The record gives the reactivity of an RNA of 207 nucleotides to DMS and 2A3. For DMS the reverse transcriptase was MarathonRT.
[RMDB]
RNA sequence: GGGAACGACUCGAGUAGAGUCGAAAAACUAAGAUCAUGGCAAAACUGACUGAUGUGAGAGAUACCCCUGAGAUCGCCAACGGCGCAAAGGUCAUCGCGGUGCCUGUGAAGGGCGGUACCACCAUUUAUCAGGGCGCACUCGUCGCUCUGGACGCGAUCUACGUCUACCAUUCGUGGUAGACGUAGAAAAAGAAACAACAACAACAAC
Reactivity to DMS in 0.01 (KOAc 150mM, MgCl2 10mM, bicine 150mM(pH8.5), 24C), signal-to-noise 1, nucleotides 027 to 156: a140c100u020a110a180g000a030u000c030a040u010g060g040c020a090a040a090a120c040u010g020a100c000u010g020a140u000g010u000g020a110g010a120g030a130u000a110c060c010c010c050u000g000a090g020a050u000c020g090c040c020a050a130c130g010g000c070g040c040a070a040a060g000g000u010c050a150u000c070g040c000g000g010u000g000c000c000u000g000u000g010a120a030g000g000g060c080g000g000u020a070c050c010a090c000c010a110u000u000u000a160u000c030a050g000g040g060c000g000c010a140c060u010c060g000u020c000g060c000u000c000u000g010g000a060c050g020c000g000a120
Reactivity to 2A3 in 0.01 (KOAc 150mM, MgCl2 10mM, bicine 150mM(pH8.5), 24C), signal-to-noise 3, nucleotides 027 to 156: a000c070u110a090a030g120a110u050c020a030u110g080g030c040a060a080a030a080c070u050g100a030c020u040g000a020u080g080u060g040a020g000a000g010a070u070a130c000c000c030c020u010g050a050g010a090u060c030g000c000c040a080a080c120g030g020c000g000c070a080a050a060g050g030u060c020a020u040c080g020c010g060g030u080g050c000c020u060g020u110g060a070a050g000g070g000c020g010g000u020a060c020c020a030c000c010a050u050u110u090a140u190c000a000g000g000g000c030g000c030a100c080u140c100g190u160c010g010c000u000c000u010g010g010a030c040g020c010g050a040
The data come from the RNA Mapping Database (RMDB), library OK3TST. The reactions ran in a buffer of 150 mM KOAc, 10 mM MgCl2 and 150 mM bicine (pH 8.5), at 24 C. For 2A3 the reverse transcriptase was SuperScript II with manganese.